RNA sequence: GGGAACGACUCGAGUAGAGUCGAAAAGAACCAGUGUUCGCACUGGUUCAAACCUGACAAGGGAGUGAGGAAAGUGUGCGAAAAGCACACUUAAACUCCCUAAAACCGUGAGCUUCGGCUCACGGAAGAAGUAUACGGGGUUCGCCCCGUAUACUUCAAAAGAAACAACAACAACAAC
Reactivity to DMS in 0.01 (KOAc 150mM, MgCl2 10mM, bicine 150mM(pH8.5), 24C), signal-to-noise 1, nucleotides 027 to 126: g030a010a000c000c000a000g000u010g000u000u040c200g010c010a010c010u000g020g000u000u010c020a020a060a150c000c030u000g000a090c250a120a000g000g020g000a000g020u000g000a170g040g010a100a060a020g020u000g010u000g020c000g030a060a080a060a150g000c000a030c020a000c000u000u020a020a230a040c010u000c000c000c000u000a020a000a080a160c020c000g000u000g000a000g000c000u000u020c230g020g020c000u020c000a000c000g000g000a020a080
Overview:
Structure probing data (DMS) for a 177-nucleotide construct. Source: RMDB library M2PK50, as collected in RNAgym. The reactions ran in a buffer of 150 mM KOAc, 10 mM MgCl2 and 150 mM bicine (pH 8.5), at 24 C.